[RMDB]
RNA sequence: GGGAACGACUCGAGUAGAGUCGAAAACUGCGUCCGGGCAAAGCUCGUGACAAAGUCCUGGCUUCGCGGGCAGGACCCAGAGCUCCUUGAUAGUGGCGGCUGUGGCCACGUGAGCAGGCACAGGUGCCACUGCAUGGUGGUUCGCCACCAUGCAGUGAAAAGAAACAACAACAACAAC
Reactivity to 2A3 in 0.01 (KOAc 150mM, MgCl2 10mM, bicine 150mM(pH8.5), 24C), signal-to-noise 8, nucleotides 027 to 126: c020u040g010c030g020u000c000c000g010g030g010c090a270a150a030g010c010u020c020g160u260g040a030c040a010a060a000g030u020c000c010u070g060g050c010u080u070c080g020c060g050g000g050c030a030g020g040a060c020c000c010a030g020a030g040c020u040c020c020u100u140g100a130u120a180g070u050g050g000c030g020g050c050u080g040u120g190g050c010c000a030c010g040u070g050a040g020c080a060g040g010c020a010c000a060g220g080u030g020c010
Reactivity to DMS in 0.01 (KOAc 150mM, MgCl2 10mM, bicine 150mM(pH8.5), 24C), signal-to-noise 9, nucleotides 027 to 126: c030u000g010c300g000u000c010c020g000g000g010c120a130a130a150g010c000u000c010g010u010g010a050c080a060a260a070g010u000c010c010u000g000g000c040u000u000c190g010c210g000g010g010c020a040g000g000a100c010c050c020a070g000a140g000c050u000c040c030u000u000g010a100u010a060g020u000g000g010c010g010g000c030u000g010u010g000g000c010c010a060c040g000u010g000a160g010c050a060g000g010c010a050c030a020g000g000u000g010c040